[RMDB]
RNA sequence: GGGAACGACUCGAGUAGAGUCGAAAAACACAGAUAUUACGGCUAAUGUUUAUUAGUCAAGUUUCCAUGAGCUCACUCUUUAUUCUUUUUCUCGUUUUCUUAUACCUAGUAUUUUUUCUGACGCUUUAUGAUAGUCCCAGUUCGCUGGGACUAUCAUAAAAGAAACAACAACAACAAC
Reactivity to 2A3 in 0.01 (KOAc 150mM, MgCl2 10mM, bicine 150mM(pH8.5), 24C), signal-to-noise 1, nucleotides 027 to 126: a050c090a060c010a000g110a060u230a090u110u240a090c010g000g000c000u000a000a000u040g100u220u160u180a020u040u000a030g000u010c010a000a050g000u000u160u010c040c040a040u090g010a010g060c030u060c040a010c010u030c000u000u040u040a070u090u020c000u100u090u000u020u000c000u060c020g040u000u000u070u050c000u080u090a090u040a040c000c000u020a020g090u020a190u000u160u110u000u000u030c020u010g010a030c030g000c000u010u000u000